[RMDB]
Conditions: 150 mM KOAc, 10 mM MgCl2 and 150 mM bicine (pH 8.5), 24 C. The record gives the reactivity of an RNA of 177 nucleotides to DMS. The DMS profile rests on 1,135 reads.
RNA sequence: GGGAACGACUCGAGUAGAGUCGAAAACGUAAGUUCCACGGUUACAAGGCGGGGUAUCCUGAGUACCGUGGGUUGGAAUUCUCGCGGGAAGCUGGGGGUCAUCAACCCCCAAGGCUAAAUACGUCCCCAAAACUGUGGAGUUCGCUCCACAGUUUUGAAAAGAAACAACAACAACAAC
Reactivity to DMS in 0.01 (KOAc 150mM, MgCl2 10mM, bicine 150mM(pH8.5), 24C), signal-to-noise 2, nucleotides 027 to 126: c040g020u010a140a150g010u000u010c000c000a040c000g000g000u010u020a020c060a130a070g020g010c110g030g010g000g020u000a070u000c020c010u010g020a220g000u000a040c000c010g000u000g010g000g020u000u000g010g000a090a110u000u000c020u000c000g020c070g000g000g010a100a060g000c070u000g000g000g000g010g020u000c130a140u020c300a100a100c000c000c000c000c000a010a010g000g000c040u000a050a060a140u000a110c040g000u000c020c000c020